Structure probing data (2A3 and DMS) for a 177-nucleotide construct.
[RMDB]
RNA sequence: GGGAACGACUCGAGUAGAGUCGAAAAAAAAGGGACAUAACUUCAAUCAGGCUAUCGAGCAUCUCGACAGAAUCGGGAUUGACAUCAUUGAACGACAAAAACCUCAGGACUUUACCACCUACCUGCGACAUAUGUUGGCAUUCGUGCCAACAUAUGUAAAAGAAACAACAACAACAAC
Reactivity to 2A3 in 0.01 (KOAc 150mM, MgCl2 10mM, bicine 150mM(pH8.5), 24C), signal-to-noise 2, nucleotides 027 to 126: a000a000a020a020g080g000g010a040c020a050u110a060a030c010u060u040c050a040a080u070c000a030g020g020c020u070a050u150c030g050a010g060c020a010u000c000u020c030g010a020c020a100g110a110a090u050c030g040g000g000a020u010u120g050a010c020a070u060c020a030u040u130g030a040a010c030g070a010c090a000a060a010a010a010c000c040u060c040a010g020g010a010c020u090u110u050a050c020c000a020c010c000u020a060c020c000u000g060c010g050
Reactivity to DMS in 0.01 (KOAc 150mM, MgCl2 10mM, bicine 150mM(pH8.5), 24C), signal-to-noise 3, nucleotides 027 to 126: a000a010a080a090g020g000g000a130c070a070u010a110a100c120u000u000c090a040a070u010c150a070g010g000c070u000a080u000c060g000a050g030c110a050u000c010u010c030g010a040c120a130g000a050a280u000c030g000g020g020a030u010u000g010a100c070a030u000c060a060u000u010g010a060a060c050g010a090c050a020a080a040a080a050c150c040u000c050a060g000g010a040c090u000u000u000a050c060c020a060c050c020u010a060c050c020u000g020c160g010

For DMS the reverse transcriptase was MarathonRT.